This 177-nucleotide RNA was probed chemically with DMS and 2A3. For DMS the reverse transcriptase was MarathonRT. It was measured as part of the RMDB libraries RFM100 and RFMREP. 2A3 adducts were read by reverse transcription with SuperScript II with manganese.
RNA sequence: GGGAACGACUCGAGUAGAGUCGAAAACCUGGAAACGAAUUAUUCGGAGAUAGGGUUUAAUGAUUGGUAGAGCGUCACACCUCUGUGGCGUCUAGUGUGUCCUUGACAAUCCUUGAAAAGCCGAAGGCGCAUUGGGUAAGUUCGCUUACCCAAUGCGAAAAGAAACAACAACAACAAC
Reactivity to DMS in 0.01 (KOAc 150mM, MgCl2 10mM, bicine 150mM(pH8.5), 24C), signal-to-noise 9, nucleotides 027 to 126: c010c000u010g000g000a070a040a040c060g010a140a120u020u010a090u000u000c010g000g010a070g010a160u010a020g010g000g000u000u000u010a070a030u000g000a030u000u000g000g000u000a030g000a080g010c010g020u000c010a010c000a090c300c190u040c220u010g020u000g010g000c010g000u000c000u000a010g010u000g020u020g000u000c010c110u010u020g010a130c250a020a010u000c010c000u000u000g000a110a070a080a140g010c000c010g000a020a030g010g020
Reactivity to 2A3 in 0.01 (KOAc 150mM, MgCl2 10mM, bicine 150mM(pH8.5), 24C), signal-to-noise 8, nucleotides 027 to 126: c000c000u020g080g050a060a070a060c070g030a080a070u160u070a120u130u070c010g000g010a030g020a060u070a040g030g000g010u010u020u060a090a070u080g060a030u040u110g050g050u090a010g010a030g080c020g000u010c000a010c010a020c010c120u100c200u180g010u000g000g000c000g000u010c000u000a040g070u030g060u040g030u060c020c020u010u020g000a010c050a020a010u020c000c000u020u030g060a080a070a060a040g040c000c010g000a010a010g050g000